The data come from the RNA Mapping Database (RMDB), library OK2TRN.
Structure probing data (2A3 and DMS) for a 177-nucleotide construct.
RNA sequence: GGGAACGACUCGAGUAGAGUCGAAAACAUUUCUAUCUUUAGCUUCCUCAAUCAACACAGUUCAGACACAACGCUUUCUGGUACAUGGGAGUUCGGGAAAAUCAGGCAUGUAGAUUCUGGACGAGUAGGUAAACACAUGAUUCGUCAUGUGUUUACCAAAAGAAACAACAACAACAAC
Reactivity to 2A3 in 0.01 (KOAc 150mM, MgCl2 10mM, bicine 150mM(pH8.5), 24C), signal-to-noise 3, nucleotides 027 to 126: c020a030u100u120u000c060u080a180u020c040u030u080u080a030g010c020u040u000c010c030u060c020a050a100u100c040a020a100c040a020c010a110g010u010u040c020a010g020a030c000a000c010a160a060c070g010c040u040u070u050c020u060g060g050u080a070c020a110u080g090g000g040a120g030u090u060c030g010g030g050a050a050a010a090u100c030a010g050g000c000a000u020g010u010a050g030a140u090u000c010u020g020g050a020c020g010a020g020u040a040
Reactivity to DMS in 0.01 (KOAc 150mM, MgCl2 10mM, bicine 150mM(pH8.5), 24C), signal-to-noise 4, nucleotides 027 to 126: c110a150u010u010u000c030u000a060u010c040u000u000u000a090g010c060u000u000c000c000u000c150a100a090u010c110a050a080c100a060c080a070g010u010u000c040a050g000a070c080a060c070a080a090c090g030c060u010u000u000c010u000g000g010u010a050c120a080u000g020g010g000a120g010u000u010c070g010g000g010a060a040a060a110u000c070a050g010g020c060a060u000g010u000a070g010a160u000u010c030u000g010g000a080c040g020a070g010u010a070
The reactions ran in a buffer of 150 mM KOAc, 10 mM MgCl2 and 150 mM bicine (pH 8.5), at 24 C. For DMS the reverse transcriptase was MarathonRT. 2A3 is a SHAPE reagent: it acylates the 2'-hydroxyl of flexible nucleotides of all four kinds.